RNA sequence: GGGAACGACUCGAGUAGAGUCGAAAAAGCCUGGUCGAUACGUCAACCAGGCAAUGCCGCCACAACGGCUUCCUGGCGUGGCGGAUCUCAUCCAAUGGAGCAACGCUCCGGAUACGUCCGGAGCGAAAAAAGCUCUGCUUCUUCGGAAGCAGAGCAACGAGUAGAUUUUGUUCGCAAAAUCUACUCGAAAAGAAACAACAACAACAAC
Reactivity to 2A3 in 0.01 (KOAc 150mM, MgCl2 10mM, bicine 150mM(pH8.5), 24C), signal-to-noise 2, nucleotides 027 to 156: a000g300c000c000u000g010g000u010c020g030a010u010a060c080g030u010c020a020a010c000c000a000g000g000c000a000a000u020g000c000c000g000c010c000a010c010a010a020c050g080g000c000u170u190c020c020u020g020g000c040g000u000g000g010c010g000g000a030u010c040u030c020a040u040c050c080a120a100u180g010g000a040g000c020a000a080c020g020c000u010c010c020g000g020a040u050a020c200g060u000c000c040g000g000a000g000c020g010a030a000a000a000a000a000g000c000u000c000u000g010c000u000u010c010u030u050c060g080g000a000a000g020c000a000g010a000g000c000a000a030

The record gives the reactivity of an RNA of 207 nucleotides to 2A3. For 2A3, 1,464 sequencing reads were counted. For 2A3 the reverse transcriptase was SuperScript II with manganese. It was measured as part of the RMDB library M2RFPK.